[RMDB]
RNA sequence: GGGAACGACUCGAGUAGAGUCGAAAAAAGCAGAACAACAUCGCCCGGAGACAUCUUAGAGACGACAUCUGCAGCAUUCAGGCAGUCAGGUGCGAAUGUGACGGGCCUCAAUAGCAGUUCGCUGAGGAUCAAGCGGUGCAUUCGUGCACCGCUUGAUAAAAGAAACAACAACAACAAC
Reactivity to DMS in 0.01 (KOAc 150mM, MgCl2 10mM, bicine 150mM(pH8.5), 24C), signal-to-noise 1, nucleotides 027 to 126: a130a070g000c000a000g010a070a000c070a040a080c190a110u000c280g000c040c000c000g000g000a170g030a000c160a000u020c050u030u000a260g000a130g000a190c010g000a030c000a070u040c000u000g000c030a300g010c160a120u000u000c300a060g030g000c050a030g050u000c000a000g000g060u000g030c070g000a120a000u000g000u000g000a150c070g000g000g020c000c120u090c180a050a000u030a050g010c100a120g000u050u000c000g000c040u000g000a120g010g000
Reactivity to 2A3 in 0.01 (KOAc 150mM, MgCl2 10mM, bicine 150mM(pH8.5), 24C), signal-to-noise 1, nucleotides 027 to 126: a000a000g030c000a000g000a030a000c040a040a000c020a110u050c020g000c010c000c000g000g000a070g000a020c030a010u140c080u190u170a100g020a030g010a230c000g050a040c010a000u000c080u000g010c000a050g020c000a010u200u300c090a110g110g070c000a000g120u230c020a000g050g000u000g000c030g000a120a020u060g000u110g000a000c000g000g000g000c000c040u100c020a100a120u130a060g000c080a000g110u150u000c050g000c050u020g010a000g000g040
Chemical mapping of a 177-nucleotide RNA with DMS and 2A3.
Values cover nucleotides 27 to 126.
The data come from the RNA Mapping Database (RMDB), library OK1LIB.